[RMDB]
Source information: Chemical mapping of a 207-nucleotide RNA with 2A3. The reactions ran in a buffer of 150 mM KOAc, 10 mM MgCl2 and 150 mM bicine (pH 8.5), at 24 C. Reactivities are given for positions 27 through 156. Values are in units of 0.01, from 0 to 300, in steps of 10.
RNA sequence: GGGAACGACUCGAGUAGAGUCGAAAAGGAAGCUUCUGGAACCCUUGCAGAAGGUAUAACCCUGCUUCUCUGCAUACCGAUUGCAUAAUUUCCCUUCACUACUCUGCUACCAGAUAAAUAACAGGAGAUUUAACAAUCAUCACAUGGAAAACCAUUCGUCUAGAGUCACAUUCGUGUGACUCUAGACAAAAGAAACAACAACAACAAC
Reactivity to 2A3 in 0.01 (KOAc 150mM, MgCl2 10mM, bicine 150mM(pH8.5), 24C), signal-to-noise 2, nucleotides 027 to 156: g020g020a090a000g030c050u130u060c080u230g050g030a090a090c040c010c030u000u020g030c010a000g000a100a040g070g000u060a090u100a130a060c020c000c020u000g000c020u050u010c010u010c020u140g020c020a050u040a130c000c060g090a050u050u120g000c020a030u060a150a120u150u030u050c020c000c000u020u050c090a100c060u160a050c020u040c050u060g050c010u070a110c060c080a000g020a040u110a100a080a020u140a140a080c040a020g060g010a020g010a050u010u050u060a070a070c060a030a040u090c050a040u100c050a050c020a110u000g010g050a090a000a070a130c020c040a030u160u150c090